An RNA of 177 nucleotides, treated with DMS and 2A3 and read out base by base. Source: RMDB library OK1LIB, as collected in RNAgym. The 2A3 profile rests on 86,203 reads. Conditions: 150 mM KOAc, 10 mM MgCl2 and 150 mM bicine (pH 8.5), 24 C.
RNA sequence: GGGAACGACUCGAGUAGAGUCGAAAAGGUGCUAGCUGAGAGUGCGUCUCCUCGUGCAGAGACAGUUCACCGAUUUAGCAUGUUUCCCUACGAGGCUCGUGCUAACGAUGUAGGGUACGUCAUGCGAGGGAUCGAUUAGGUUCGCUUAGUCGAUCCCAAAAGAAACAACAACAACAAC
Reactivity to DMS in 0.01 (KOAc 150mM, MgCl2 10mM, bicine 150mM(pH8.5), 24C), signal-to-noise 9, nucleotides 027 to 126: g000g020u010g010c190u020a040g010c030u000g000a100g010a160g010u000g010c070g000u010c090u010c070c050u010c060g020u010g010c060a110g010a130g010a090c060a070g000u000u010c010a050c020c020g010a130u020u020u020a120g000c010a010u000g010u010u010u010c010c000c000u000a010c020g010a120g010g020c160u010c080g000u010g010c130u040a100a100c110g010a090u030g010u000a020g000g000g000u010a030c210g000u020c020a020u000g000c020g010a180
Reactivity to 2A3 in 0.01 (KOAc 150mM, MgCl2 10mM, bicine 150mM(pH8.5), 24C), signal-to-noise 9, nucleotides 027 to 126: g040g000u040g020c070u080a100g020c020u040g040a020g010a020g160u080g030c030g040u030c030u050c040c020u050c030g070u090g020c050a020g030a020g030a180c010a030g020u040u060c030a050c060c010g010a030u070u080u180a020g000c000a000u010g020u010u060u050c000c000c000u000a010c020g040a060g110g030c040u040c120g100u170g050c050u090a170a050c030g030a030u180g010u020a010g020g000g020u040a030c080g080u050c020a010u010g000c010g010a120